[RMDB]
The record gives the reactivity of an RNA of 177 nucleotides to DMS and 2A3. The DMS profile rests on 3,077 reads. Conditions: 150 mM KOAc, 10 mM MgCl2 and 150 mM bicine (pH 8.5), 24 C.

RNA sequence: GGGAACGACUCGAGUAGAGUCGAAAAGAUAUGGAUGGGUCCAGAGCUUACAGUCGGAAACGACUGGAGCGACGAAGGAGCCCAUCCUAAGUCGAUGGAUCCUUAUUAGUUCGCUAAUAAGGAUCAACACUUCUUAGCUGUUCGCAGCUAAGAAGUGAAAAGAAACAACAACAACAAC
Reactivity to DMS in 0.01 (KOAc 150mM, MgCl2 10mM, bicine 150mM(pH8.5), 24C), signal-to-noise 2, nucleotides 027 to 126: g000a010u000a190u010g000g000a000u000g010g010g010u000c020c010a110g020a180g020c000u010u000a110c000a010g000u000c000g010g000a040a040a070c000g010a010c000u000g000g000a010g000c000g020a110c270g000a140a160g000g000a090g020c000c000c000a000u000c000c000u000a000a100g000u000c000g000a180u010g000g010a000u000c000c000u000u000a000u000u010a020g010u010u010c190g030c000u000a010a000u000a010a010g010g000a000u000c000a050a130
Reactivity to 2A3 in 0.01 (KOAc 150mM, MgCl2 10mM, bicine 150mM(pH8.5), 24C), signal-to-noise 2, nucleotides 027 to 126: g000a010u010a030u060g000g000a000u000g000g040g000u000c020c020a050g030a010g200c010u030u170a300c030a010g000u000c000g010g000a040a020a010c010g000a000c010u010g020g010a010g000c000g030a150c070g070a020a020g020g020a130g120c000c010c020a000u000c010c000u000a020a010g000u000c010g010a060u220g190g000a010u020c010c000u000u000a000u000u000a030g050u040u070c300g000c220u010a000a010u000a000a010g030g000a000u000c000a000a000

Source: RMDB library TTRDEL, as collected in RNAgym.